Record summary
The record gives the reactivity of an RNA of 177 nucleotides to DMS and 2A3. The 2A3 profile rests on 1,469 reads.
RNA sequence: GGGAACGACUCGAGUAGAGUCGAAAACGGGUGCAGGGGAUUUCAGUGACUGGCCUGGUCAAACGCGGCUGGAUGGUGAGAUCCGUCUUUGACACGAUCGACGGUAUCGACCAACUCGGCGAGCAGCCAGCAUGAUUAGCUUCGGCUAAUCAUGCUGAAAAGAAACAACAACAACAAC
Reactivity to DMS in 0.01 (KOAc 150mM, MgCl2 10mM, bicine 150mM(pH8.5), 24C), signal-to-noise 2, nucleotides 027 to 126: c100g010g000g000u000g000c040a060g050g010g000g010a120u000u000u000c040a090g010u000g010a100c070u010g000g000c030c010u000g030g010u000c060a060a060a150c180g000c050g000g000c030u020g000g010a080u010g000g010u000g000a130g010a030u000c000c000g000u000c010u000u000u010g010a190c170a100c230g010a070u000c080g010a040c020g000g020u000a080u010c000g000a060c030c010a080a130c060u020c040g000g000c000g020a100g020c060a160g000c110
Reactivity to 2A3 in 0.01 (KOAc 150mM, MgCl2 10mM, bicine 150mM(pH8.5), 24C), signal-to-noise 2, nucleotides 027 to 126: c020g000g090g010u150g050c020a040g020g000g000g050a010u040u020u180c100a030g070u010g060a030c020u010g030g040c030c060u030g010g040u130c040a080a110a010c090g000c000g030g020c010u050g010g010a060u030g030g040u040g030a200g010a060u050c000c020g000u000c010u070u020u100g170a190c120a060c230g130a160u030c030g000a000c000g040g000u090a020u020c000g010a000c000c010a000a050c060u060c010g000g000c020g020a050g040c010a000g060c070
The RNA was probed in 150 mM KOAc, 10 mM MgCl2 and 150 mM bicine (pH 8.5) at 24 C. DMS adducts were read by reverse transcription with MarathonRT. For DMS, 1,757 sequencing reads were counted. Reactivities are given for positions 27 through 126.